[RMDB]
RNA sequence: GGGAACGACUCGAGUAGAGUCGAAAAACUCUACAUUUCGAUGUAGAGUAAGUGAAACGCCGUAGCGCGGAUGGUAGUGUGGGGUCUCCCCAUGCGAGAGUAAACCUCGGUCAUUCGUGACCGAGAACCCCAUGUUCGUAUUCGUACGAACAUGGGGAAAAGAAACAACAACAACAAC
Reactivity to 2A3 in 0.01 (KOAc 150mM, MgCl2 10mM, bicine 150mM(pH8.5), 24C), signal-to-noise 2, nucleotides 027 to 126: a000c000u000c000u010a000c000a020u090u050u200c230g160a010u010g000u020a000g020a000g020u010a040a010g060u050g080a070a030a060c030g020c000c090g220u220a060g050c080g020c030g140g030a020u040g100g010u020a010g020u010g000u000g020g000g070g080u050c150u120c060c000c020c000a020u010g030c000g010a030g000a020g010u030a030a120a100c010c000u000c000g020g000u010c010a010u040u020c100g080u010g000a010c000c000g000a000g000a010a010
Reactivity to DMS in 0.01 (KOAc 150mM, MgCl2 10mM, bicine 150mM(pH8.5), 24C), signal-to-noise 2, nucleotides 027 to 126: a050c000u000c000u000a000c000a020u000u000u000c180g020a000u000g010u000a010g000a000g020u000a010a090g010u000g000a100a060a100c000g040c000c030g000u010a130g020c130g020c020g000g000a050u090g010g020u000a020g000u010g020u000g030g000g000g010u010c200u030c030c000c000c000a000u000g010c000g000a160g000a050g010u000a050a060a090c270c000u000c000g000g000u000c000a040u000u020c110g010u000g000a000c000c000g000a000g010a050a100